[RMDB]
RNA sequence: GGGAACGACUCGAGUAGAGUCGAAAAGUGUGGUUCCUCUACGCCUAGGACACCAGAAUAUCGAACCAUGAACGAAGAAAGGCAUGAGAGAAAAGCAUAUUGGCUAGUGAUUGUGAGGCCCCAAUUCGUCUGGUUGGGGAUUCGUCCCCAACCAGACAAAAGAAACAACAACAACAAC
Reactivity to 2A3 in 0.01 (KOAc 150mM, MgCl2 10mM, bicine 150mM(pH8.5), 24C), signal-to-noise 1, nucleotides 027 to 126: g030u060g000u000g000g220u040u000c040c000u020c100u300a000c050g000c000c050u000a000g110g000a000c070a100c040c000a030g110a230a000u100a000u160c100g000a000a090c000c010a070u100g070a000a000c060g040a040a160g050a260a050a000g080g040c090a120u120g000a100g000a000g000a000a050a000a000g170c080a000u040a050u160u180g030g010c040u010a000g130u050g170a300u110u000g030u010g100a090g030g000c000c000c000c000a040a000u170u090c000
Reactivity to DMS in 0.01 (KOAc 150mM, MgCl2 10mM, bicine 150mM(pH8.5), 24C), signal-to-noise 1, nucleotides 027 to 126: g050u000g000u160g020g000u000u000c010c010u000c030u000a080c060g000c000c050u000a110g010g010a130c200a040c020c030a300g000a040a100u080a040u000c030g010a060a000c000c160a080u000g000a200a110c000g040a100a010g000a000a000a050g060g000c080a190u000g000a210g000a050g000a160a000a100a070g150c090a100u030a090u090u000g000g010c000u000a000g070u180g050a000u000u000g030u000g080a160g000g010c030c000c000c200a000a230u000u030c030